[RMDB]
RNA sequence: GGGAACGACUCGAGUAGAGUCGAAAAGAAUCCGAGCUUCGAAGAGAUCGACGUGGAUCUAGAAGAUGUUACAGUAGAAGUAGAACCCUCACCGACGUGGAAAUGUUACUCAGGUAUUACUGCACUGAAGGACGGACGACACUAUUCCAAAAAAUCGCAAAUUGAAUUACUUCGGUAAUUCAAUUUGAAAAGAAACAACAACAACAAC
Reactivity to 2A3 in 0.01 (KOAc 150mM, MgCl2 10mM, bicine 150mM(pH8.5), 24C), signal-to-noise 4, nucleotides 027 to 156: g020a030a040u010c040c010g010a020g050c020u060u030c020g100a140a110g040a050g030a130u020c020g060a080c100g080u120g090g010a020u040c040u050a050g020a120a040g030a130u080g030u100u070a060c040a050g060u090a010g050a110a000g010u050a050g020a070a050c020c010c020u030c010a030c050c060g070a060c030g030u050g020g030a040a100a090u080g020u040u050a040c020u020c070a020g060g000u060a070u060u120a040c030u040g030c080a040c060u010g020a040a010g030g000a020c010g000g010a010c010g030a000c000a000c060u070a080u070u050c000c000a110a100a000a000a040a030u140c080g000
Reactivity to DMS in 0.01 (KOAc 150mM, MgCl2 10mM, bicine 150mM(pH8.5), 24C), signal-to-noise 3, nucleotides 027 to 156: g010a110a090u000c020c000g020a140g030c040u020u000c030g010a190a180g010a160g010a050u020c050g030a180c100g030u010g030g040a040u000c030u000a130g000a080a060g010a120u000g010u020u000a050c040a100g040u000a100g020a070a060g000u000a090g000a050a150c010c010c020u000c080a140c060c020g010a090c130g050u010g020g000a070a080a100u000g000u000u000a050c060u000c070a070g020g020u000a120u000u000a070c040u000g000c050a060c090u030g020a110a050g020g020a110c000g010g020a080c050g010a120c070a040c040u000a080u000u000c000c020a000a020a040a080a120a100u000c060g020